This 207-nucleotide RNA was probed chemically with DMS and 2A3. In probing experiments dimethyl sulfate is read out at A N1 and C N3, which are open when not base-paired. The RNA was probed in 150 mM KOAc, 10 mM MgCl2 and 150 mM bicine (pH 8.5) at 24 C. For 2A3, 14,237 sequencing reads were counted.
[RMDB]
RNA sequence: GGGAACGACUCGAGUAGAGUCGAAAAUGAGACAAACACGCUUCACACUGUGCGGCAAAGAAACAUUGUUUAUGCAAAGGCACUUCGCAAUGUGUGCUCAAACAUUGCUUAUUCAAACACGCUUCACAAAAGAAUCAGUGGUUCGCCACUGAUUCAACAGAUAACUUGUGUUCGCACAAGUUAUCUGAAAAGAAACAACAACAACAAC
Reactivity to DMS in 0.01 (KOAc 150mM, MgCl2 10mM, bicine 150mM(pH8.5), 24C), signal-to-noise 3, nucleotides 027 to 156: u020g000a040g020a170c080a150a140a080c060a110c050g000c060u000u010c060a140c050a100c050u000g020u000g040c030g000g020c030a080a070a090g040a130a060a030c020a120u010u000g020u000u000u000a090u020g000c070a090a070a070g030g000c060a030c060u000u020c130g020c080a080a050u000g000u000g000u000g000c060u010c070a070a120a070c030a060u010u010g020c000u010u010a050u000u020c090a110a110a080c060a120c100g030c040u000u000c020a130c050a020a060a110a150g000a020a020u000c010a010g060u010g000g010u000u010c300g020c040c000a010c010u000g000a000u000u000c010a060a160
Reactivity to 2A3 in 0.01 (KOAc 150mM, MgCl2 10mM, bicine 150mM(pH8.5), 24C), signal-to-noise 9, nucleotides 027 to 156: u140g010a030g040a040c060a030a140a010c060a030c100g030c030u060u070c030a050c040a050c090u100g020u030g030c020g020g010c020a050a040a090g100a040a080a000c040a060u050u080g080u070u130u110a090u130g040c050a060a060a090g120g000c010a010c000u060u050c050g000c040a030a050u040g010u000g010u030g020c050u110c140a040a060a010c020a020u000u020g000c000u050u100a120u110u120c080a060a090a020c060a020c110g080c050u110u110c070a040c040a130a080a030a040g000a000a000u000c000a000g000u010g020g040u020u050c190g040c040c000a000c000u000g000a000u000u000c000a000a000